The data come from the RNA Mapping Database (RMDB), library OK2TRN. An RNA of 177 nucleotides, treated with 2A3 and DMS and read out base by base. The DMS profile rests on 3,322 reads. For DMS the reverse transcriptase was MarathonRT. Conditions: 150 mM KOAc, 10 mM MgCl2 and 150 mM bicine (pH 8.5), 24 C. 2A3 adducts were read by reverse transcription with SuperScript II with manganese.
[RMDB]
RNA sequence: GGGAACGACUCGAGUAGAGUCGAAAACAGAAUGGUUUCGUGGCUGACAUUGCUGAAGGUAAGGCACGCAAGACCAGGUACGUGGACCAUGGUUGGCCGACCACCGAUCCAGACGACCAUGCGGUGAGCGCAUACGAAAAUUCGUUUUCGUAUGCGCAAAAGAAACAACAACAACAAC
Reactivity to 2A3 in 0.01 (KOAc 150mM, MgCl2 10mM, bicine 150mM(pH8.5), 24C), signal-to-noise 3, nucleotides 027 to 126: c050a030g160a120a110u100g020g010u030u060u080c040g010u030g110g020c020u020g000a050c040a130u060u110g020c010u110g050a070a040g090g030u120a020a120g080g030c080a030c070g000c040a090a000g010a050c000c030a000g020g130u040a030c050g050u110g070g040a010c030c010a070u060g040g040u050u050g050g010c030c050g020a080c010c000a030c010c030g000a030u000c020c010a030g030a070c000g010a040c000c030a020u100g040c040g000g040u030g050a020
Reactivity to DMS in 0.01 (KOAc 150mM, MgCl2 10mM, bicine 150mM(pH8.5), 24C), signal-to-noise 4, nucleotides 027 to 126: c060a120g030a110a060u000g000g000u010u000u010c030g040u010g010g010c020u000g010a080c080a080u010u010g020c060u000g010a120a090g010g000u000a090a110g030g020c040a070c110g000c130a060a040g000a090c060c020a060g010g010u000a030c040g030u000g020g000a040c000c020a070u010g000g010u000u000g010g000c110c040g020a130c040c040a120c080c040g010a050u010c010c050a120g000a080c070g000a070c040c010a090u010g000c090g000g020u000g010a130